The record gives the reactivity of an RNA of 177 nucleotides to 2A3 and DMS.
For DMS the reverse transcriptase was MarathonRT.
It was measured as part of the RMDB library OK1LIB.
Conditions: 150 mM KOAc, 10 mM MgCl2 and 150 mM bicine (pH 8.5), 24 C.

RNA sequence: GGGAACGACUCGAGUAGAGUCGAAAAGACGCCUGUGUGGCGAAACGAGCAAUGGAAUAAGCCGCAAUAGAAGAUGAGAUGGAAGCGGCAAGAUAGAAUGCUCGCAACGAGAUCCAUCUCACAGAGAGCCAUAGGCUAGGUUCGCCUAGCCUAUGGCAAAAGAAACAACAACAACAAC
Reactivity to 2A3 in 0.01 (KOAc 150mM, MgCl2 10mM, bicine 150mM(pH8.5), 24C), signal-to-noise 2, nucleotides 027 to 126: g070a010c060g140c020c010u140g110u100g090u280g290g010c000g020a050a100a000c030g030a000g010c010a130a100u130g050g130a100a040u130a140a000g040c040c020g000c030a000a040u100a140g020a100a040g100a130u040g010a000g000a000u010g060g010a080a000g000c000g000g000c000a000a000g000a000u040a020g180a200a050u080g000c000u050c080g000c040a070a030c080g000a020g060a050u020c000c000a000u000c000u070c000a000c060a000g200a000g030a090
Reactivity to DMS in 0.01 (KOAc 150mM, MgCl2 10mM, bicine 150mM(pH8.5), 24C), signal-to-noise 2, nucleotides 027 to 126: g000a230c090g000c060c060u020g040u000g030u080g010g010c000g080a060a080a090c020g000a020g000c000a040a030u000g020g000a190a100u020a050a170g000c000c030g000c000a100a190u050a050g000a120a130g000a140u000g000a020g000a000u000g000g020a040a090g040c020g000g020c000a050a000g010a130u000a020g000a020a010u000g000c000u010c030g000c080a090a030c250g040a200g010a220u000c030c000a000u000c000u000c000a000c050a150g010a120g010a130